[RMDB]
RNA sequence: GGGAACGACUCGAGUAGAGUCGAAAACCCUCCUACCAGGUACUGCUGCGGGGUCGUGGGUCCGACGAAGGUUGGAAUUUCGAUCUUGAUAAUGCAAUCUGCACUGCGUGAGGCCGGUAAACGGAACAGCGAAAAGGAUUCCAGCGGUAUGGUGCGUCUAUCUCAUCAAGUUCGCUUGAUGAGAUAGAAAAGAAACAACAACAACAAC
Reactivity to 2A3 in 0.01 (KOAc 150mM, MgCl2 10mM, bicine 150mM(pH8.5), 24C), signal-to-noise 4, nucleotides 027 to 156: c000c000c010u030c000c010u020a030c000c010a050g150g010u020a010c000u020g010c010u010g010c010g010g020g000g010u000c010g010u020g020g050g070u000c020c010g000a000c000g080a180a080g270g000u010u000g000g000a030a010u030u070u020c000g000a000u010c000u030u060g040a050u090a250a090u130g050c080a030a030u020c010u030g020c120a050c120u090g020c010g100u120g050a160g060g040c010c000g000g060u220a270a160a020c000g000g010a020a040c010a020g010c000g020a060a000a050a070g020g010a000u040u000c020c000a000g010c020g000g000u030a030u010g000g020u020g040c010g000u020
Structure probing data (2A3) for a 207-nucleotide construct. The reactions ran in a buffer of 150 mM KOAc, 10 mM MgCl2 and 150 mM bicine (pH 8.5), at 24 C. 2A3 is a SHAPE reagent: it acylates the 2'-hydroxyl of flexible nucleotides of all four kinds.